[RMDB]
RNA sequence: GGGAACGACUCGAGUAGAGUCGAAAAUCAUUUGUGUGACGUAACAGGCAUGACAAUUGAAGGUCUUCUGGAUUGGAUAUUUGUAUCCACUGUGGGUGAAGAUGUGGUCAAAUUAAUGACAGAAGGAGAUAAGUUUUUCUUUCGAGAAAAACUUAUCAAAAGAAACAACAACAACAAC
Reactivity to 2A3 in 0.01 (KOAc 150mM, MgCl2 10mM, bicine 150mM(pH8.5), 24C), signal-to-noise 3, nucleotides 027 to 126: u050c000a020u020u060u070g060u010g000u020g030a020c010g010u010a080a020c020a060g000g040c010a010u060g100a070c010a020a090u050u070g050a080a020g110g040u030c010u040u010c020u060g070g030a150u070u050g090g020a010u040a020u200u090u080g060u040a050u040c020c010a030c020u080g030u100g060g050g070u140g080a060a020g080a070u110g030u030g040g010u000c010a000a000a060u090u090a080a060u070g010a020c000a010g040a020a000g080g030a090
Reactivity to DMS in 0.01 (KOAc 150mM, MgCl2 10mM, bicine 150mM(pH8.5), 24C), signal-to-noise 6, nucleotides 027 to 126: u000c020a040u010u000u000g030u000g020u000g010a060c060g010u010a090a110c140a140g000g010c010a040u000g000a030c050a040a050u000u000g010a090a110g010g010u000c010u000u000c040u000g000g000a130u000u000g010g010a080u000a030u000u000u010g010u010a050u010c010c020a050c070u000g020u010g020g010g020u000g000a080a070g010a070u000g010u010g000g010u000c010a020a040a060u010u000a070a090u000g010a190c040a040g010a050a050g010g010a160
Structure probing data (2A3 and DMS) for a 177-nucleotide construct. For DMS, 8,297 sequencing reads were counted. The reactions ran in a buffer of 150 mM KOAc, 10 mM MgCl2 and 150 mM bicine (pH 8.5), at 24 C. For DMS the reverse transcriptase was MarathonRT. It was measured as part of the RMDB library OK2TRN. The 2A3 profile rests on 3,965 reads.